[RMDB]
RNA sequence: GGGAACGACUCGAGUAGAGUCGAAAAAACAGAGGAGCGUGAGUUUGGCCUCGGCUCAGGUCAUAGGUGGAAGUUUCUGCUGCCCUUCGGCGCUCCAGGGCACCGUGGUGAGGACAGUGGAUCCUGCCACCGUAGGUGGGUUCGCCCACCUACGGUGAAAAGAAACAACAACAACAAC
Reactivity to DMS in 0.01 (KOAc 150mM, MgCl2 10mM, bicine 150mM(pH8.5), 24C), signal-to-noise 4, nucleotides 027 to 126: a060a050c080a080g010a120g000g000a040g010c050g020u010g010a080g010u010u000u010g020g010c090c020u000c090g010g000c050u000c050a080g010g010u010c050a080u000a080g020g010u000g000g000a100a060g010u000u000u000c020u000g000c020u000g000c010c010c010u000u000c050g000g010c030g010c000u000c030c170a140g000g010g010c010a030c020c010g020u000g020g020u010g010a030g000g000a010c020a050g020u000g000g000a060u000c030c010u010g000c060
Reactivity to 2A3 in 0.01 (KOAc 150mM, MgCl2 10mM, bicine 150mM(pH8.5), 24C), signal-to-noise 2, nucleotides 027 to 126: a000a000c160a050g050a080g070g020a040g010c080g060u090g060a110g110u030u220u220g070g010c010c020u060c020g030g000c040u030c040a020g040g070u050c010a050u080a130g080g000u030g020g050a100a070g030u030u060u010c020u020g000c020u010g000c010c000c000u040u070c020g010g040c030g000c000u000c040c020a030g040g030g000c020a010c020c010g060u060g030g090u130g110a050g030g010a030c000a030g030u050g030g020a040u020c020c020u010g020c000